[RMDB]
RNA sequence: GGGAACGACUCGAGUAGAGUCGAAAAGUAUGAUCCUUCGGGAUCAUACAAAUAAACUCGCCUAUAGGCAGGCGAGAACCAAAGCGGCUAAAGCAAUGGAAAAAAUCGGAUACUUCGGUAUCCGAAAGCUAGUCGUAAGGUUCGCCUUACGACUAGCAAAAGAAACAACAACAACAAC
Reactivity to 2A3 in 0.01 (KOAc 150mM, MgCl2 10mM, bicine 150mM(pH8.5), 24C), signal-to-noise 1, nucleotides 027 to 126: g000u000a000u020g000a010u010c010c000u010u060c220g130g010g000a000u000c000a000u010a000c000a000a010a000u080a000a050a030c000u000c020g000c000c020u110a120u120a120g180g050c090a010g010g000c000g000a020g040a000a000c010c000a000a020a010g030c030g090g000c100u200a200a030a020g000c040a010a020u050g000g000a100a040a000a000a020a040u020c010g000g000a000u000a000c000u030u100c260g050g000u000a010u030c000c000g020a000a010a020
Reactivity to DMS in 0.01 (KOAc 150mM, MgCl2 10mM, bicine 150mM(pH8.5), 24C), signal-to-noise 1, nucleotides 027 to 126: g000u040a000u000g000a000u020c000c000u010u020c230g020g020g000a030u000c000a000u020a000c000a020a150a010u000a100a060a190c000u030c000g000c000c000u000a030u040a240g010g070c160a060g000g020c000g010a020g000a110a100c000c000a020a090a300g020c020g030g040c120u000a040a150a290g000c100a010a040u000g030g000a030a040a090a110a040a120u000c000g010g000a000u000a030c000u000u020c210g000g000u000a000u000c000c000g010a000a020a060